[RMDB]
The record gives the reactivity of an RNA of 177 nucleotides to 2A3 and DMS.
The DMS profile rests on 8,563 reads.
The data come from the RNA Mapping Database (RMDB), library OK2TRN.

RNA sequence: GGGAACGACUCGAGUAGAGUCGAAAAAGCAAAACCGCGAACUGUGUUCAGUCUUAAAGUACGAGUGACCGUUCACGUUUAGUCAUAAUGUACAAUGAAAGGCUUCCAGCUUACUAAGGCGUGUACGCGUCGUAUUCUUUUUCGAAAGAAUACGACGAAAAGAAACAACAACAACAAC
Reactivity to 2A3 in 0.01 (KOAc 150mM, MgCl2 10mM, bicine 150mM(pH8.5), 24C), signal-to-noise 7, nucleotides 027 to 126: a000g070c040a040a030a010a030c030c010g020c030g030a030a040c020u030g010u020g030u300u100c040a020g020u000c010u040u160a140a110a020g020u020a030c030g040a040g080u040g020a030c010c030g050u070u100c110a040c100g050u070u140u180a040g000u020c020a010u030a170a080u230g020u020a010c040a050a110u140g090a130a040a020g010g000c000u200u040c020c020a020g010c020u070u060a040c040u070a080a040g080g000c030g040u060g030u040a030c100g000
Reactivity to DMS in 0.01 (KOAc 150mM, MgCl2 10mM, bicine 150mM(pH8.5), 24C), signal-to-noise 7, nucleotides 027 to 126: a060g020c080a070a050a090a090c090c030g020c050g020a050a060c030u020g010u000g010u010u000c100a040g020u000c030u000u000a080a110a130g010u010a010c020g010a300g010u000g000a030c040c030g010u010u000c180a060c130g010u010u000u000a090g000u000c030a020u000a060a140u010g010u010a020c040a070a110u000g000a090a090a050g010g000c030u000u010c050c050a060g000c060u000u000a090c160u010a070a100g010g010c030g000u000g010u000a070c170g020